An RNA of 177 nucleotides, treated with DMS and 2A3 and read out base by base. The RNA was probed in 150 mM KOAc, 10 mM MgCl2 and 150 mM bicine (pH 8.5) at 24 C. The DMS profile rests on 4,677 reads. Source: RMDB library OK2TRN, as collected in RNAgym.

RNA sequence: GGGAACGACUCGAGUAGAGUCGAAAAGGUAGAUUUAGCACAAUUUUUUGAAAAGAAAUUGUGCAUAGUUUGGAGACAACAUGUAGCGCACGCAUGUUGUGAGAAAUGCUUAACGCUGUGUGCGAGAACUCCGGUAUAGUUUCGACUAUACCGGAGUAAAAGAAACAACAACAACAAC
Reactivity to DMS in 0.01 (KOAc 150mM, MgCl2 10mM, bicine 150mM(pH8.5), 24C), signal-to-noise 4, nucleotides 027 to 126: g010g010u010a070g000a070u000u010u010a300g010c010a010c000a000a000u000u000u000u000u000u020g000a130a100a090a270g000a000a000a010u000u010g010u000g010c000a120u000a020g010u000u000u010g000g000a210g010a050c020a010a010c020a010u010g000u000a120g000c020g010c010a020c030g000c000a000u000g000u000u000g010u000g000a100g000a060a100a070u000g020c040u010u010a100a130c160g020c160u010g020u000g010u010g020c000g000a110g010a110
Reactivity to 2A3 in 0.01 (KOAc 150mM, MgCl2 10mM, bicine 150mM(pH8.5), 24C), signal-to-noise 5, nucleotides 027 to 126: g050g020u050a010g010a160u080u110u210a010g000c000a000c000a000a000u000u000u000u010u060u250g150a130a110a020a020g010a000a010a000u020u010g000u000g000c000a000u020a000g030u010u090u130g110g020a130g000a020c000a030a000c000a000u010g010u030a030g020c010g010c000a000c010g000c000a000u010g010u010u030g010u020g020a050g050a020a120a040u160g020c050u160u070a110a030c090g030c180u080g020u010g000u010g100c000g000a010g020a010